Description: The record gives the reactivity of an RNA of 207 nucleotides to 2A3. For 2A3 the reverse transcriptase was SuperScript II with manganese.
RNA sequence: GGGAACGACUCGAGUAGAGUCGAAAAGAAUAUGCUCAUCAGCAACCACAAUACUUGUCUACCAAUGAGAAUAUCAGCUCCUUGAACACCUCCUUGGAAAAGAUUGUGUUUGCAAUGUCAUAGAGAACUGCCAGGUUCUAAAGAGGGUGGAAAAAGGGUUUACCCGGUAUUUCGAUACCGGGUAAACAAAAGAAACAACAACAACAAC
Reactivity to 2A3 in 0.01 (KOAc 150mM, MgCl2 10mM, bicine 150mM(pH8.5), 24C), signal-to-noise 3, nucleotides 027 to 156: g010a010a080u060a000u050g020c020u000c080a050u010c060a050g000c000a010a000c010c020a000c010a020a040u240a300c050u050u110g080u140c080u150a120c020c000a020a020u060g010a010g010a100a100u100a100u200c010a000g090c090u190c070c090u170u060g030a050a010c010a020c070c000u020c010c000u020u010g010g010a050a010a000a030g010a010u000u010g000u000g000u020u000u040g010c000a020a010u030g010u000c000a000u030a020g090a000g030a090a050c020u030g060c040c000a040g030g000u030u040c030u060a050a050a000g080a070g030g060g050u110g050g000a020a030a190a010a010g080g010
The RNA was probed in 150 mM KOAc, 10 mM MgCl2 and 150 mM bicine (pH 8.5) at 24 C. It was measured as part of the RMDB library OK3TST.